[RMDB]
RNA sequence: GGGAACGACUCGAGUAGAGUCGAAAAGAUAUGGAGGUUGCACGGGCACCGUUGAAAUCGGAAACGAUGGAGGUGCCGUGUUUUGAACCUCCUAAGUCAAAGUAUUUCGAGUUCGCUCGAAAUACAAGUUGUGAUAGAGGUUCGCCUCUAUCACAACAAAAGAAACAACAACAACAAC
Reactivity to 2A3 in 0.01 (KOAc 150mM, MgCl2 10mM, bicine 150mM(pH8.5), 24C), signal-to-noise 2, nucleotides 027 to 126: g030a030u090a060u150g020g010a010g000g030u030u040g020c020a010c090g040g300g030c030a000c050c030g050u180u060g020a030a040a000u020c010g000g060a110a030a050c020g000a000u020g020g040a010g000g010u000g000c020c000g000u010g010u000u030u070u120g020a000a010c000c000u000c010c000u010a040a020g000u000c040a030a070a080g000u000a000u000u010u000c010g000a000g020u000u130c240g130c060u010c000g000a000a000a000u000a010c000a010a020
Reactivity to DMS in 0.01 (KOAc 150mM, MgCl2 10mM, bicine 150mM(pH8.5), 24C), signal-to-noise 3, nucleotides 027 to 126: g020a040u000a300u000g000g010a030g030g010u000u000g010c010a030c000g020g010g020c000a010c000c010g010u000u020g000a070a080a020u000c010g000g000a150a120a180c000g000a020u000g000g000a090g020g010u000g010c000c010g000u000g000u000u000u010u000g020a010a000c000c010u010c000c000u000a020a080g000u000c030a120a130a190g010u000a010u000u000u000c010g020a020g010u000u000c240g010c000u000c000g000a010a010a000u000a000c010a060a060